[RMDB]
RNA sequence: GGGAACGACUCGAGUAGAGUCGAAAAGUGCCGAUUGAAAUUCAUGGGAGCCUCUCCAUAAUGGAUGAACGCCGCGCUAGUACGCGCAGUCGCGACGUAAACGCUCUGUUUUCCCGUUCAGGCCUCACCACGAUAUCGUAUUCGUACGAUAUCGUGGAAAAGAAACAACAACAACAAC
Reactivity to 2A3 in 0.01 (KOAc 150mM, MgCl2 10mM, bicine 150mM(pH8.5), 24C), signal-to-noise 2, nucleotides 027 to 126: g080u040g000c030c000g040a060u040u270g050a100a110a080u150u080c040a080u100g040g000g000a010g010c020c030u080c020u000c020c000a030u200a270a060u250g000g020a020u110g010a060a030c000g020c010c000g020c000g000c010u000a020g070u090a060c060g040c020g050c100a000g110u160c050g020c010g040a040c010g020u010a000a140a000c030g000c000u010c000u010g080u080u000u030u040c040c000c000g020u070u060c030a010g050g020c040c010u020c010a070
Reactivity to DMS in 0.01 (KOAc 150mM, MgCl2 10mM, bicine 150mM(pH8.5), 24C), signal-to-noise 3, nucleotides 027 to 126: g010u000g000c020c040g020a130u010u000g020a120a080a090u010u000c070a060u010g020g010g000a050g000c080c060u000c050u010c010c010a130u000a090a090u020g000g000a040u000g020a100a070c050g010c020c000g000c010g000c020u000a090g000u010a080c250g010c100g030c080a030g020u020c010g030c020g000a030c030g010u000a030a070a090c180g010c020u010c020u010g020u000u010u000u000c020c020c010g010u010u010c140a060g000g000c040c050u000c110a200
Notes:
The record gives the reactivity of an RNA of 177 nucleotides to 2A3 and DMS. Conditions: 150 mM KOAc, 10 mM MgCl2 and 150 mM bicine (pH 8.5), 24 C. For DMS, 3,052 sequencing reads were counted. For DMS the reverse transcriptase was MarathonRT.